[RMDB]
RNA sequence: GGGAACGACUCGAGUAGAGUCGAAAAGAUAUGGAGUAAGAGAACCUAUAUUAAGACGUUGAAAUCGGAAACGAUGGAGUCUGUAUAGGACUUACUCCUAAGUCAAAGACUCCGUUCGCGGAGUCAAGCAUGUAAGAUUCUUCGGAAUCUUACAUGCAAAAGAAACAACAACAACAAC
Reactivity to DMS in 0.01 (KOAc 150mM, MgCl2 10mM, bicine 150mM(pH8.5), 24C), signal-to-noise 2, nucleotides 027 to 126: g000a030u000a300u000g000g020a040g020u000a000a000g010a170g010a200a070c000c000u000a010u000a000u000u000a090a010g010a000c010g030u000u010g000a080a210a000u000c000g000g000a130a090a110c020g000a000u000g000g000a100g010u000c010u000g010u000a000u010a020g030g000a100c000u000u000a000c000u010c010c010u010a010a060g010u010c010a100a060a150g000a000c000u000c000c010g020u000u020c210g030c020g020g010a000g000u010c020a020a080
Reactivity to 2A3 in 0.01 (KOAc 150mM, MgCl2 10mM, bicine 150mM(pH8.5), 24C), signal-to-noise 2, nucleotides 027 to 126: g030a010u060a040u160g010g010a030g010u010a000a030g090a040g110a170a130c020c000u010a010u000a040u110u240a190a030g020a010c030g180u290u070g000a070a040a020u020c020g020g040a090a050a070c000g000a010u000g020g000a000g020u000c000u010g020u010a010u020a010g000g050a040c000u010u000a000c000u000c000c000u000a020a000g010u000c030a050a090a050g000a000c000u000c020c000g020u050u070c300g030c000g100g000a000g000u010c000a000a010